Structure probing data (2A3 and DMS) for a 177-nucleotide construct.
The RNA was probed in 150 mM KOAc, 10 mM MgCl2 and 150 mM bicine (pH 8.5) at 24 C.

RNA sequence: GGGAACGACUCGAGUAGAGUCGAAAAGAACUCGAAAACCAUAUGCCGCGUGCGUUUACUGAAGCGCAAGCCGAAGCAAUGGUGACAAUUGUCUUCAGUGCGGGUGCCGAGGCGUUGGACGUCGGCAACUCGUACGUGGCUUCGGCCACGUACGAGUAAAAGAAACAACAACAACAAC
Reactivity to 2A3 in 0.01 (KOAc 150mM, MgCl2 10mM, bicine 150mM(pH8.5), 24C), signal-to-noise 1, nucleotides 027 to 126: g010a010a020c010u020c070g020a020a040a060a090c020c020a070u080a070u270g020c000c020g000c020g010u060g010c000g000u010u010u160a220c130u150g110a060a020g020c010g000c010a010a010g100c000c020g070a030a010g010c020a000a020u030g050g010u040g060a010c080a070a300u110u170g050u020c030u050u080c070a060g000u040g090c010g010g000g050u080g010c010c000g030a020g030g000c070g000u060u130g090g000a010c010g040u120c010g000g050c000a020
Reactivity to DMS in 0.01 (KOAc 150mM, MgCl2 10mM, bicine 150mM(pH8.5), 24C), signal-to-noise 3, nucleotides 027 to 126: g000a120a110c050u000c060g000a120a070a090a130c040c080a070u010a110u000g020c000c010g000c110g000u010g010c020g020u000u000u000a220c130u000g010a120a040g000c000g000c010a060a070g000c020c050g020a070a030g000c010a030a010u000g000g020u000g000a150c170a090a100u000u000g000u010c010u000u010c040a090g020u030g020c000g000g020g010u010g010c000c010g010a140g000g000c050g000u000u010g020g010a060c050g000u000c010g010g010c020a070